[RMDB]
RNA sequence: GGGAACGACUCGAGUAGAGUCGAAAAAGAAUUCAAUCAGGGCACUAUCUCGUCCAUUAAUGUUGGCAUUAGCUGGCUUUGAUAGUUUUGAAGAUUAUGAUAUCAUCAGAAAUUCAAUUGAGCCACCCCCGUAUCAGGCGUUCGCGCCUGAUACGGGAAAAGAAACAACAACAACAAC
Reactivity to 2A3 in 0.01 (KOAc 150mM, MgCl2 10mM, bicine 150mM(pH8.5), 24C), signal-to-noise 1, nucleotides 027 to 126: a000g250a120a030u300u230c150a170a130u200c000a020g000g000g000c000a020c000u000a070u000c020u050c100g240u080c020c000a000u000u190a030a010u190g120u300u300g250g100c000a000u150u020a020g000c120u100g100g000c050u230u000u120g020a000u000a020g030u000u190u000u000g030a050a050g000a000u020u050a000u000g000a100u080a120u300c070a050u080c000a020g000a000a000a000u000u000c000a000a050u010u040g000a000g000c000c000a000c020c000
The record gives the reactivity of an RNA of 177 nucleotides to 2A3. Values cover nucleotides 27 to 126.